[RMDB]
RNA sequence: GGGAACGACUCGAGUAGAGUCGAAAAGCAAAGAAAUUUUAUCCGAAUAAGGCGAAGUAAGCAAGUCGACCCAACGCGAGGGCGCUAGCGAGCUUACGAGCCCUAGCAGACUAAUAGCGAGAAAAAAUCUUUAAUUCAAGUUCGCUUGAAUUAAAGAAAAAGAAACAACAACAACAAC
Reactivity to DMS in 0.01 (KOAc 150mM, MgCl2 10mM, bicine 150mM(pH8.5), 24C), signal-to-noise 4, nucleotides 027 to 126: g010c070a060a070a110g000a050a070a110u010u010u000u000a130u010c020c030g000a070a110u010a080a070g020g020c030g010a070a150g000u000a010a030g020c010a100a140g020u000c040g010a180c030c020c010a070a110c110g010c140g010a100g010g010g000c020g010c240u010a070g010c080g000a260g020c030u000u000a020c020g000a300g000c000c000c020u000a040g010c070a080g040a060c080u010a060a050u000a050g030c030g000a140g020a020a040a030a080a130a060
Reactivity to 2A3 in 0.01 (KOAc 150mM, MgCl2 10mM, bicine 150mM(pH8.5), 24C), signal-to-noise 2, nucleotides 027 to 126: g040c050a080a110a030g120a070a170a030u120u110u140u090a080u080c020c020g070a110a120u070a130a020g010g030c010g010a030a000g000u000a000a020g020c000a050a040g020u050c020g080a300c010c010c000a070a120c050g020c050g110a120g010g030g000c030g000c030u040a030g070c030g030a030g000c000u000u010a000c010g000a010g000c000c000c010u000a010g000c000a010g020a060c010u060a070a110u070a170g050c050g040a020g000a120a050a000a000a010a030